[RMDB]
RNA sequence: GGGAACGACUCGAGUAGAGUCGAAAAAUCAGUGGCUAAGCCCAGACUUUUGAGAGAUGUGAUGACCUCUCAGCCCUUCCACCUUGGGGUGCCCUAUUCGGAGCACUGCAGUUCCCGAUAGAAAGGCGAAAGCACUGUAGUUCGCUACAGUGCUUUCAAAAGAAACAACAACAACAAC
Reactivity to DMS in 0.01 (KOAc 150mM, MgCl2 10mM, bicine 150mM(pH8.5), 24C), signal-to-noise 2, nucleotides 027 to 126: a050u000c040a070g030u010g010g010c070u000a110a180g020c010c000c010a130g010a070c120u000u000u000u000g020a020g000a040g000a070u000g010u000g000a060u020g010a110c300c020u000c000u000c000a040g000c050c010c010u000u010c030c030a050c110c070u010u000g000g020g010g020u000g010c000c000c020u000a120u010u000c140g010g030a090g000c010a010c050u000g020c070a130g000u000u000c000c000c010g030a180u010a060g000a070a080a060g000g010c180